[RMDB]
RNA sequence: GGGAACGACUCGAGUAGAGUCGAAAACAGGUAAGUACACAAUUCUCUAAGCCAUGAGAAGCGUGUGGAAAAUUAGGGAAGGGCUACGGCUAUAAUCCUAAGAAAGCUUAUCUACAAGCGGAGGUAUAAAAGCUCGCAGCGUUCGCGCUGCGAGCAACUUUGUUACUUAGUUCGCUAAGUAACAAAGAAAAGAAACAACAACAACAAC
Reactivity to 2A3 in 0.01 (KOAc 150mM, MgCl2 10mM, bicine 150mM(pH8.5), 24C), signal-to-noise 2, nucleotides 027 to 156: c040a000g030g020u030a030a010g080u110a010c010a000c010a020a080u000u000c000u000c010u050a200a180g110c030c030a080u190g000a010g000a020a010g010c060g020u010g000u060g000g020a100a060a030a110u050u040a020g000g040g010a080a040g090g000g000c000u030a010c110g010g000c000u010a020u040a220a050u080c010c010u020a020a000g070a030a060a040g000c010u010u030a010u060c000u020a070c050a120a010g040c040g120g020a070g000g040u110a130u070a300a150a070a010g000c000u000c000g000c000a020g000c020g030u040u060c130g010c000g000c090u000g020c040g000a000g000c000a000a000